Overview
This 207-nucleotide RNA was probed chemically with 2A3. For 2A3, 1,272 sequencing reads were counted. 2A3 adducts were read by reverse transcription with SuperScript II with manganese. Source: RMDB library RNAMAK, as collected in RNAgym. The reactions ran in a buffer of 150 mM KOAc, 10 mM MgCl2 and 150 mM bicine (pH 8.5), at 24 C.

RNA sequence: GGGAACGACUCGAGUAGAGUCGAAAACGCUGGGCCAUGAGAACUGAUGCACUAUGAAGUACUGAAGCGCGCACGGUAUGGAGUAUAUCAGACAUGGCCUGUGCUGAAGCGCGCACGGCAACCGAAAGGUGCGAUUACUCUCAAUUCGUUGAGAGAAUAGAUUCACACGUUUCGACGUGUGAAUCUAAAAAGAAACAACAACAACAAC
Reactivity to 2A3 in 0.01 (KOAc 150mM, MgCl2 10mM, bicine 150mM(pH8.5), 24C), signal-to-noise 2, nucleotides 027 to 156: c030g040c010u010g010g000g030c020c000a050u040g010a080g140a250a100c050u020g010a030u110g160c150a030c140u220a260u300g090a090a040g020u000a010c010u040g010a130a070g030c010g030c000g000c010a020c020g050g000u000a040u110g080g050a080g130u140a200u040a040u300c010a020g040a090c000a010u000g000g000c010c010u000g000u000g010c000u020g000a100a020g000c000g000c010g000c010a010c010g010g000c000a000a000c010c000g040a070a070a000g060g010u000g000c000g000a000u030u150a100c000u010c010u000c010a000a040u150u050c260g070u080u020g000a000g000a000g000a000a090